[RMDB]
RNA sequence: GGGAACGACUCGAGUAGAGUCGAAAAUUUUAAUGGUACGUGAGACUCAGCCCACUAGAGGGCAGUAGCGCCCCCUGGUUGUGUGGAUCAGAACUGGCUUCAGACAUCACUAGUGUCCCUGGGGGACCGUAUUCUUACAUUUCGAUGUAAGAAUACGAAAAGAAACAACAACAACAAC
Reactivity to 2A3 in 0.01 (KOAc 150mM, MgCl2 10mM, bicine 150mM(pH8.5), 24C), signal-to-noise 8, nucleotides 027 to 126: u070u080u040u100a130a080u120g040g000u070a030c040g030u040g050a070g020a040c020u010c090a020g030c010c010c020a020c020u040a030g040a060g060g020g000c040a030g050u080a050g050c090g000c010c000c000c000c000u010g030g010u090u060g040u020g030u050g070g030a070u070c040a040g050a080a040c040u050g070g010c030u080u050c020a020g020a050c010a060u070c010a020c070u040a060g060u010g030u100c010c000c020u030g040g000g010g000g000a000c020
Reactivity to DMS in 0.01 (KOAc 150mM, MgCl2 10mM, bicine 150mM(pH8.5), 24C), signal-to-noise 9, nucleotides 027 to 126: u010u010u010u010a060a100u000g010g010u000a050c090g020u000g010a140g010a090c070u000c070a120g010c030c030c080a070c080u000a050g010a070g010g000g020c020a070g010u000a090g010c170g010c020c010c010c020c010u000g010g010u000u000g010u000g020u000g010g000a090u000c080a070g010a070a090c090u000g000g000c060u000u000c050a080g000a070c070a040u000c050a050c090u000a070g010u000g000u000c010c010c010u000g010g000g010g000g010a090c230
Background:
An RNA of 177 nucleotides, treated with 2A3 and DMS and read out base by base. The reactions ran in a buffer of 150 mM KOAc, 10 mM MgCl2 and 150 mM bicine (pH 8.5), at 24 C.